Source information
An RNA of 207 nucleotides, treated with DMS and 2A3 and read out base by base. DMS adducts were read by reverse transcription with MarathonRT. The RNA was probed in 150 mM KOAc, 10 mM MgCl2 and 150 mM bicine (pH 8.5) at 24 C. For 2A3, 7,337 sequencing reads were counted. In probing experiments dimethyl sulfate is read out at A N1 and C N3, which are open when not base-paired.
RNA sequence: GGGAACGACUCGAGUAGAGUCGAAAAGGGUGUUUCGACACCCGUCAAGCCGAGGUAGCCUAGCCCGGCCAAGGCGGUAGAUUCGAAAUCUACUGUCCAUUCGGACACGUGAGUUCAAAUCUCACCCUCGGCGCCAUCAAAGCGAGUUCGCUCGCAAGAUUAAUCAGACUUUCGAGUCUGAUUAAUCAAAAGAAACAACAACAACAAC
Reactivity to DMS in 0.01 (KOAc 150mM, MgCl2 10mM, bicine 150mM(pH8.5), 24C), signal-to-noise 3, nucleotides 027 to 156: g020g020g050u000g010u000u000u000c130g030a120c020a020c010c010c010g020u000c070a090a300g010c020c030g000a060g000g010u000a120g040c050c050u010a170g010c010c010c010g010g000c100c050a060a070g020g010c000g020g040u010a010g010a050u000u000c220g010a080a230a170u000c010u010a050c020u000g010u010c010c020a240u000u010c080g050g020a020c030a050c060g020u010g000a020g010u000u000c140a090a100a130u010c020u000c010a060c070c000c000u000c000g010g000c000g010c030c020a080u010c060a070a090a200g040c000g010a050g020u000u000c190g000c010u000c010g040c020a060a180
Reactivity to 2A3 in 0.01 (KOAc 150mM, MgCl2 10mM, bicine 150mM(pH8.5), 24C), signal-to-noise 6, nucleotides 027 to 156: g000g010g000u030g010u040u110u160c150g070a010c010a000c000c000c000g010u030c020a030a020g000c010c000g000a010g000g020u130a030g010c020c060u040a050g000c010c010c020g020g000c040c020a070a030g000g010c000g010g010u010a010g000a020u090u110c190g090a180a130a020u000c000u010a000c000u010g030u030c010c000a030u130u160c040g020g010a020c030a010c120g000u000g010a010g010u130u150c040a050a050a060u040c000u000c000a000c000c000c000u000c000g000g030c000g000c020c000a070u180c070a060a110a010g000c010g000a000g000u080u100c170g050c070u000c000g000c010a020a010